[RMDB]
RNA sequence: GGGAACGACUCGAGUAGAGUCGAAAAAUCGGCAAGCUCCUGCGCAUCAGCCGCGGCAGCAUGCCUGCUUCCAUCAGCGAUGCAGCUGCAGCAGAGACCUGGGCCCAUAUGCAGGUGGCAUGUGCGGCCAUGCACGCUUCUUCGGAAGCGUGCAUGGAAAAGAAACAACAACAACAAC
Reactivity to 2A3 in 0.01 (KOAc 150mM, MgCl2 10mM, bicine 150mM(pH8.5), 24C), signal-to-noise 2, nucleotides 027 to 126: a000u120c050g000g000c050a080a000g020c020u050c030c030u050g020c000g000c020a170u150c090a050g130c110c000g000c020g000g010c010a000g000c010a030u060g010c000c030u010g010c000u100u030c020c040a190u150c050a050g070c010g040a050u100g070c010a010g000c010u070g000c000a030g020c030a000g060a000g040a230c020c030u020g030g110g030c000c060c000a080u090a070u150g070c040a030g030g210u040g160g050c010a030u010g000u050g040c050g010g000
Reactivity to DMS in 0.01 (KOAc 150mM, MgCl2 10mM, bicine 150mM(pH8.5), 24C), signal-to-noise 3, nucleotides 027 to 126: a050u010c050g000g000c010a070a090g010c030u000c240c010u000g010c010g010c050a210u020c240a160g040c100c020g020c060g000g050c130a030g020c010a080u000g020c030c020u000g000c040u000u000c040c050a120u010c140a090g000c040g000a050u000g020c050a060g030c030u000g010c060a030g000c040a060g000a190g000a080c080c060u000g020g010g000c010c020c040a060u010a030u010g010c030a140g000g020u000g000g010c000a010u000g010u010g010c100g020g020